Chemical mapping of a 177-nucleotide RNA with DMS and 2A3. The RNA was probed in 150 mM KOAc, 10 mM MgCl2 and 150 mM bicine (pH 8.5) at 24 C.
RNA sequence: GGGAACGACUCGAGUAGAGUCGAAAACAAUAUGCAUAGAUCGCAUGUACUCUAUUUAUGCGUAUUAGUAUGCUCGUAGAACGAAUUGCACUCAUGAAAAUGAGUGUAGUACAUGCGACGAGCAUAAGGUAGUUGUAGAUUUCGAUCUACGACUACCAAAAGAAACAACAACAACAAC
Reactivity to DMS in 0.01 (KOAc 150mM, MgCl2 10mM, bicine 150mM(pH8.5), 24C), signal-to-noise 9, nucleotides 027 to 126: c050a100a100u010a000u010g000c000a060u020a060g010a090u000c020g020c020a020u000g000u020a020c120u000c030u010a030u000u010u010a020u000g000c030g020u000a020u010u040a110g020u020a020u000g000c000u010c150g000u000a020g010a030a150c300g010a090a070u040u020g000c000a000c000u000c000a000u010g010a090a070a140a010u000g000a010g000u000g000u000a010g020u000a010c020a030u000g010c000g000a020c000g000a070g010c010a000u000a030a080
Reactivity to 2A3 in 0.01 (KOAc 150mM, MgCl2 10mM, bicine 150mM(pH8.5), 24C), signal-to-noise 9, nucleotides 027 to 126: c030a010a070u030a010u050g000c010a020u050a180g110a210u010c010g010c020a010u040g030u080a040c030u020c010u050a060u050u150u030a070u100g010c010g020u030a030u040u050a090g170u050a020u050g010c000u010c030g020u010a010g020a110a030c090g040a120a060u090u060g000c000a000c000u000c000a000u020g080a060a050a020a020u010g000a010g000u000g000u000a000g000u000a000c010a010u020g010c000g000a000c000g010a010g000c000a000u010a040a030